[RMDB]
RNA sequence: GGGAACGACUCGAGUAGAGUCGAAAACCCUAGUUCGCUAGGGACAAACGCGUACUACGCAUCGUUCAUCGAUCUGUGUCUCCCCACCCAGUCCCAAAUAGGACUGGAGGACACAGGGAGAACGUUGCGUAUCGCUGAUAUACACCUUCGGGUGUAACCCGAAUCAAGUGUUCGCACUUGAUUCGGGAAAAGAAACAACAACAACAAC
Reactivity to 2A3 in 0.01 (KOAc 150mM, MgCl2 10mM, bicine 150mM(pH8.5), 24C), signal-to-noise 5, nucleotides 027 to 156: c010c000c000u000a010g010u030u060c300g020c110u010a000g010g030g030a020c120a030a200a040c140g000c000g030u110a150c010u000a000c030g000c000a010u000c010g040u030u020c080a270u240c200g090a060u010c030u010g020u000g040u000c040u140c080c090c010c000a030c000c010c000a000g000u010c030c020c020a130a270a090u180a060g000g000a000c000u000g020g000a030g000g000a000c000a000c010a000g000g000g000a030g000a000a000c000g000u020u020g040c010g000u010a010u200c020g010c010u010g030a030u070a020u060a140c000a020c000c000u020u130c300g090g000g030u030g010u030a050a040
Reactivity to DMS in 0.01 (KOAc 150mM, MgCl2 10mM, bicine 150mM(pH8.5), 24C), signal-to-noise 2, nucleotides 027 to 156: c000c000c000u010a090g000u000u010c250g020c020u000a030g000g050g000a150c060a090a040a120c230g000c000g000u000a090c150u000a010c010g010c000a010u000c000g040u000u040c010a200u010c220g000a020u020c010u000g010u030g000u000c020u000c080c000c010c130a300c210c000c000a050g000u000c000c000c020a010a110a200u010a050g000g030a050c000u020g000g000a110g020g000a030c020a020c000a020g000g000g000a050g000a080a010c020g010u000u000g030c000g020u000a000u000c000g000c000u000g000a170u000a190u000a010c010a000c000c040u000u000c290g020g000g050u000g010u000a010a080
This 207-nucleotide RNA was probed chemically with 2A3 and DMS. 2A3 adducts were read by reverse transcription with SuperScript II with manganese. The data come from the RNA Mapping Database (RMDB), library RNAMAK.